[RMDB]
RNA sequence: GGGAACGACUCGAGUAGAGUCGAAAAUUUCCUAUAUUUGACUUUUGUUCUAAAAGUUAUUUGGAGAGAAAAGGCAUGAUUGAGGUUGCGACUUUUUCGUUUUUGCUUUUGCAUGGAUAAUUCAUCCUUCAGAAAGUGAGUUCGCUCACUUUCUGAAAAAAGAAACAACAACAACAAC
Reactivity to 2A3 in 0.01 (KOAc 150mM, MgCl2 10mM, bicine 150mM(pH8.5), 24C), signal-to-noise 1, nucleotides 027 to 126: u060u030u030c000c000u000a010u010a010u050u010u080g010a000c010u060u000u030u070g120u110u170c150u120a020a020a000a000g050u010u000a050u180u060u080g130g080a160g000a010g000a080a090a090a090g060g010c060a080u110g010a050u050u180g010a010g060g000u100u040g050c070g000a070c010u010u080u050u000u050c050g030u010u000u000u050u180g110c060u100u000u090u060g080c120a120u060g050g020a010u010a130a000u090u000c050a020u000c000c020
Reactivity to DMS in 0.01 (KOAc 150mM, MgCl2 10mM, bicine 150mM(pH8.5), 24C), signal-to-noise 2, nucleotides 027 to 126: u030u010u010c000c000u000a230u030a110u050u000u010g000a020c010u010u010u020u000g010u000u020c080u040a040a020a020a040g000u020u020a030u030u000u000g000g000a150g030a070g020a040a050a050a020g010g020c020a000u020g000a100u000u020g020a070g020g010u000u000g010c050g000a210c130u000u000u010u000u000c040g030u010u050u000u020u000g000c030u020u000u000u000g010c060a070u010g000g000a010u000a070a130u020u020c130a120u000c000c020